The data come from the RNA Mapping Database (RMDB), library OK2TRN. Structure probing data (2A3 and DMS) for a 177-nucleotide construct. Reactivities are given for positions 27 through 126. For 2A3, 1,841 sequencing reads were counted. The reactions ran in a buffer of 150 mM KOAc, 10 mM MgCl2 and 150 mM bicine (pH 8.5), at 24 C.
RNA sequence: GGGAACGACUCGAGUAGAGUCGAAAACAGGCUGGAGUGCAGUGGUGCCAUCUUGGCUCACGGGAACCUCUGCCUCCCGGGGUCAAGCAAUUCUCCCGCCUCAGCUUCCCGAGUAGCUGGGAUUACAACAGAAAACACGAUUCGUCGUGUUUUCUGUAAAAGAAACAACAACAACAAC
Reactivity to 2A3 in 0.01 (KOAc 150mM, MgCl2 10mM, bicine 150mM(pH8.5), 24C), signal-to-noise 1, nucleotides 027 to 126: c010a010g030g000c030u050g010g070a070g060u130g030c080a070g050u080g190g110u060g040c030c030a160u080c050u000u040g000g010c000u010c030a280c000g000g000g020a040a020c040c100u150c070u140g070c010c040u040c020c000c000g000g000g000g040u010c000a020a000g000c020a080a070u130u000c000u010c030c000c020g000c000c010u030c030a020g010c040u060u020c010c020c010g030a100g000u030a020g000c030u090g000g000g080a060u100u110a070c040a110
Reactivity to DMS in 0.01 (KOAc 150mM, MgCl2 10mM, bicine 150mM(pH8.5), 24C), signal-to-noise 3, nucleotides 027 to 126: c140a070g010g020c030u010g010g000a060g000u000g020c070a050g030u010g010g000u010g020c080c160a070u010c040u000u000g010g010c010u000c010a080c020g010g010g010a060a070c100c080u000c080u010g010c140c070u000c000c010c010g000g000g010g000u000c020a020a020g010c210a070a080u010u000c040u000c010c010c040g000c050c000u000c040a040g010c110u000u000c010c010c010g020a060g030u000a050g020c020u000g000g010g010a130u000u000a060c130a170